This 177-nucleotide RNA was probed chemically with 2A3 and DMS. Source: RMDB library OK2TRN, as collected in RNAgym. DMS adducts were read by reverse transcription with MarathonRT.

RNA sequence: GGGAACGACUCGAGUAGAGUCGAAAAGAUGCCAUGGGAUCCGAGUCGAUCCAUGACAGUACCAUGGUCAUGGAGCCAUGACGAUCACUAGCUGUGGUACGUGAUCUGCCAUGCGCUAGCUCGAUGAUCUAUCGUAGCUGUUCGCAGCUACGAUAGAAAAAGAAACAACAACAACAAC
Reactivity to 2A3 in 0.01 (KOAc 150mM, MgCl2 10mM, bicine 150mM(pH8.5), 24C), signal-to-noise 3, nucleotides 027 to 126: g080a020u110g020c020c010a050u040g080g000g020a030u010c040c000g020a010g040u060c050g030a050u000c030c010a000u010g000a000c020a010g110u110a140c030c090a090u130g050g000u000c000a020u020g010g020a000g020c050c020a060u070g020a020c010g010a010u020c020a010c040u040a050g080c080u080g080u140g160g000u060a070c100g060u090g030a040u000c050u150g060c010c000a010u010g000c080g000c060u020a020g010c010u040c050g130a140u100g020a030
Reactivity to DMS in 0.01 (KOAc 150mM, MgCl2 10mM, bicine 150mM(pH8.5), 24C), signal-to-noise 4, nucleotides 027 to 126: g000a080u010g030c020c030a060u000g010g000g010a060u010c070c030g000a100g000u000c060g010a120u000c010c010a010u000g000a020c020a060g010u030a220c200c260a090u040g000g010u010c010a020u010g010g030a050g000c040c030a010u000g000a030c050g010a020u010c030a040c010u000a160g010c060u010g020u000g010g010u000a090c230g050u000g000a030u010c030u020g020c010c000a020u010g000c190g010c040u010a060g010c060u010c020g000a120u010g010a180